[RMDB]
RNA sequence: GGGAACGACUCGAGUAGAGUCGAAAAAACUUCACGCGCUACACUCUCUGACACGGUACCGCUCCGUAAAGAGCCUACAUUUUGCUAACAAGUAUUUCCUUUUACGCGGUAAACAGUGUAGACCUAACAAUGAAGAACACUUCGGUGUUCUUCAUUGAAAAGAAACAACAACAACAAC
Reactivity to DMS in 0.01 (KOAc 150mM, MgCl2 10mM, bicine 150mM(pH8.5), 24C), signal-to-noise 4, nucleotides 027 to 126: a040a040c070u000u010c130a080c130g010c050g030c030u000a060c050a050c040u010c030u010c040u010g000a160c200a040c070g000g000u000a040c150c070g010c080u000c050c030g000u000a030a170a040g000a050g020c230c080u000a050c140a050u000u000u010u010g020c050u000a090a100c210a050a050g000u000a040u000u000u010c040c020u000u000u000u010a090c090g020c120g020g000u000a060a040a080c130a020g020u000g010u000a020g010a100c080c050u010a080a150
Reactivity to 2A3 in 0.01 (KOAc 150mM, MgCl2 10mM, bicine 150mM(pH8.5), 24C), signal-to-noise 2, nucleotides 027 to 126: a000a000c080u120u030c120a080c050g090c010g010c010u020a020c010a020c020u030c000u010c010u010g030a000c000a000c220g050g000u070a140c010c060g050c110u080c010c040g000u010a000a060a050g030a020g060c010c030u090a080c050a100u110u150u100u180g030c030u040a110a040c010a120a000g050u040a090u030u070u100c000c000u020u090u060u130a080c090g000c040g060g050u040a130a080a010c050a010g010u020g010u040a020g020a020c020c000u020a040a030